[RMDB]
RNA sequence: GGGAACGACUCGAGUAGAGUCGAAAACCGGAGUAGUUCGCUACUCCGGAAAUAAAUUCAGCGGUAAUUCGACCGCAAAUAUUACCGCUGAUGCGGUCGAUAAAACUGCCAAGUUCGCUUGGCAGAAGUUUCCAUAACUCUUCGGAGUUAUGGAAACAAAAGAAACAACAACAACAAC
Reactivity to DMS in 0.01 (KOAc 150mM, MgCl2 10mM, bicine 150mM(pH8.5), 24C), signal-to-noise 1, nucleotides 027 to 126: c010c010g000g060a040g030u010a010g010u000u000c200g030c010u000a000c000u000c000c000g010g000a000a020a020u010a060a090a060u010u000c030a060g010c000g000g020u030a090a010u000u010c160g000a070c100c170g010c080a090a040a090u010a060u030u000a050c010c010g000c010u000g000a030u000g040c080g030g000u000c080g010a140u000a070a020a120a110c010u000g000c000c000a000a020g010u000u030c140g000c010u000u010g000g000c000a010g010a030a030
Reactivity to 2A3 in 0.01 (KOAc 150mM, MgCl2 10mM, bicine 150mM(pH8.5), 24C), signal-to-noise 2, nucleotides 027 to 126: c000c000g020g000a020g020u010a010g000u020u110c230g020c100u000a000c000u000c010c010g000g020a000a020a000u050a000a090a020u070u060c030a020g000c020g040g060u050a030a050u070u100c050g050a070c050c060g010c030a010a020a000u080a010u020u040a020c000c000g000c040u020g040a000u030g000c020g000g090u070c020g010a040u090a110a160a070a070c020u010g020c000c000a000a020g000u040u070c200g030c120u000u000g000g010c000a000g000a000a000